The record gives the reactivity of an RNA of 177 nucleotides to DMS and 2A3. For 2A3 the reverse transcriptase was SuperScript II with manganese. The reactions ran in a buffer of 150 mM KOAc, 10 mM MgCl2 and 150 mM bicine (pH 8.5), at 24 C. Values cover nucleotides 27 to 126. Source: RMDB library M2PK50, as collected in RNAgym.

RNA sequence: GGGAACGACUCGAGUAGAGUCGAAAAUCUCGCAAGUUCGCUUGCGAGAGUAAUAAAUAAAAUGGGUUCAACUGCCCCCCUUUUCCGAGGGUAUCGGAAACCGUACAAACGGCUUCGGCCGUUUGAAGUGAAUACAGUCAUUCGUGACUGUAUUCACAAAAGAAACAACAACAACAAC
Reactivity to DMS in 0.01 (KOAc 150mM, MgCl2 10mM, bicine 150mM(pH8.5), 24C), signal-to-noise 2, nucleotides 027 to 126: u000c010u000c000g020c000a020a000g020u010u000c240g010c000u000u010g020c020g000a000g020a000g020u000a050a070u020a070a090a130u010a060a030a100a110u010g010g010g000u000u000c170a110a110c270u000g000c010c020c000c020c020c010u010u000u010u000c000c000g010a020g010g010g010u010a020u010c000g010g000a000a020a110c300c170g000u000a150c030a010a010a000c000g010g000c000u000u000c300g020g020c000c000g000u010u010u000g000a070a100
Reactivity to 2A3 in 0.01 (KOAc 150mM, MgCl2 10mM, bicine 150mM(pH8.5), 24C), signal-to-noise 3, nucleotides 027 to 126: u000c000u000c000g020c000a010a000g000u070u110c160g020c140u020u010g000c000g000a010g010a000g000u010a010a170u050a050a070a040u220a090a070a020a080u070g010g020g040u110u240c090a170a060c130u120g000c000c000c010c000c010c000u010u100u050u030c000c000g020a000g000g030g040u080a040u010c000g010g030a010a030a000c060c040g070u150a100c020a000a000a000c000g000g010c010u020u030c200g100g000c000c010g000u000u000u000g000a010a000